[RMDB]
RNA sequence: GGGAACGACUCGAGUAGAGUCGAAAACACUGGUUUGAGUUACUAGUUAACCUGCUCAAGUUGAGUGACCACCAGUUGUGUUCAGGGAGGUCACCUGAAGGAAGGAAGCUGAAUACACUGUGAAUUAUACGUCCUACUGGUUCGCCAGUAGGACGUAAAAAGAAACAACAACAACAAC
Reactivity to 2A3 in 0.01 (KOAc 150mM, MgCl2 10mM, bicine 150mM(pH8.5), 24C), signal-to-noise 2, nucleotides 027 to 126: c010a000c000u010g010g120u030u070u090g120a180g030u030u110a040c010u040a050g210u100u080a100a060c000c010u010g000c000u020c040a030a070g010u020u200g120a050g000u050g040a080c000c000a020c000c010a030g020u050u120g030u090g010u050u030c000a010g000g060g010a090g020g100u050c040a040c060c000u120g090a180a110g120g050a030a010g000g000a040a010g070c030u020g000a010a000u010a020c020a000c040u040g000u020g160a000a010u300u000a060
Reactivity to DMS in 0.01 (KOAc 150mM, MgCl2 10mM, bicine 150mM(pH8.5), 24C), signal-to-noise 2, nucleotides 027 to 126: c080a040c030u010g010g000u010u000u000g000a080g020u000u020a040c070u000a070g010u020u000a080a040c150c050u000g010c010u000c030a040a080g020u000u000g000a080g050u000g000a180c040c000a250c090c010a060g010u020u020g030u000g010u010u000c000a060g000g000g040a140g010g010u000c060a120c030c010u010g010a140a060g000g010a090a080g000g010a110a230g010c020u010g000a020a030u000a000c040a050c160u000g000u010g000a100a120u000u000a160
An RNA of 177 nucleotides, treated with 2A3 and DMS and read out base by base. Values cover nucleotides 27 to 126. For DMS the reverse transcriptase was MarathonRT. 2A3 adducts were read by reverse transcription with SuperScript II with manganese. For 2A3, 1,003 sequencing reads were counted. Conditions: 150 mM KOAc, 10 mM MgCl2 and 150 mM bicine (pH 8.5), 24 C.